[RMDB]
An RNA of 177 nucleotides, treated with DMS and 2A3 and read out base by base. The RNA was probed in 150 mM KOAc, 10 mM MgCl2 and 150 mM bicine (pH 8.5) at 24 C. The 2A3 profile rests on 1,384 reads. The DMS profile rests on 984 reads. Source: RMDB library TTRINS, as collected in RNAgym.
RNA sequence: GGGAACGACUCGAGUAGAGUCGAAAAGAUAUGGAAAUCUUUUGUUGAUGACCAUAGCUCCCCACCUGAGUUUCUCUCGGAAACGAGAGAAACUCAGAGGCUAUGCAAGACGGAGAUUUCCUAAGUCCUGUACAAUACUCUUCGGAGUAUUGUACAGAAAAGAAACAACAACAACAAC
Reactivity to DMS in 0.01 (KOAc 150mM, MgCl2 10mM, bicine 150mM(pH8.5), 24C), signal-to-noise 1, nucleotides 027 to 126: g000a060u000a090u010g000g000a000a000a000u000c010u040u010u000u010g020u000u020g000a160u020g000a300c300c010a000u000a000g010c010u010c040c050c010c020a300c220c020u000g000a020g030u000u000u000c000u010c010u000c000g020g010a060a020a150c000g000a010g000a000g000a010a020a010c000u000c000a000g000a060g030g020c000u000a010u000g000c020a080a200g010a040c000g010g000a000g000a010u000u000u000c010c000u010a050a160g010u000c020
Reactivity to 2A3 in 0.01 (KOAc 150mM, MgCl2 10mM, bicine 150mM(pH8.5), 24C), signal-to-noise 1, nucleotides 027 to 126: g000a020u090a090u250g030g010a010a000a010u000c010u070u100u280u300g040u010u080g130a300u120g040a080c000c000a010u020a010g010c020u050c020c120c020c040a060c000c000u000g060a010g060u000u040u000c000u000c000u000c010g000g010a030a090a040c000g030a020g010a000g000a000a000a000c010u030c000a000g000a030g040g000c000u010a000u020g000c070a140a220g000a000c000g080g000a010g010a010u020u040u040c000c010u010a060a050g090u050c000